[RMDB]
RNA sequence: GGGAACGACUCGAGUAGAGUCGAAAAUGUUCUAGCUUACUGUAACAAUCUUUACUUAACCAAAGAACAAUUAGGCUUUUCUGCUGAAGAUACAGAACAUCUAAGUGCUGAAAUGGUUAGACUGAGAUCACAUCGUCUUCUUCGGAAGACGAUGUGAAAAAGAAACAACAACAACAAC
Reactivity to 2A3 in 0.01 (KOAc 150mM, MgCl2 10mM, bicine 150mM(pH8.5), 24C), signal-to-noise 1, nucleotides 027 to 126: u210g000u050u000c020u030a060g040c040u110u120a070c070u090g070u180a070a130c050a080a120u030c010u050u040u060a050c050u030u000a010a000c020c000a070a000a070g030a090a020c010a020a030u050u020a000g090g000c050u100u040u010u010c050u070g040c030u090g140a070a030g010a070u040a070c030a000g010a000a000c000a000u090c000u090a100a040g020u000g140c170u070g030a040a050a080u030g090g000u050u020a030g060a060c030u110g090a030g030a080
Reactivity to DMS in 0.01 (KOAc 150mM, MgCl2 10mM, bicine 150mM(pH8.5), 24C), signal-to-noise 2, nucleotides 027 to 126: u000g020u000u020c040u010a160g000c090u000u000a130c110u000g000u000a050a020c110a070a130u010c020u000u040u010a090c030u010u000a020a010c060c010a010a020a170g010a120a060c020a010a090u000u000a020g010g010c280u000u000u000u000c020u010g010c140u020g020a060a110g010a130u040a110c010a000g000a030a040c300a010u000c020u000a000a020g010u020g010c010u000g020a090a080a150u000g010g000u020u010a000g010a070c200u000g000a050g000a080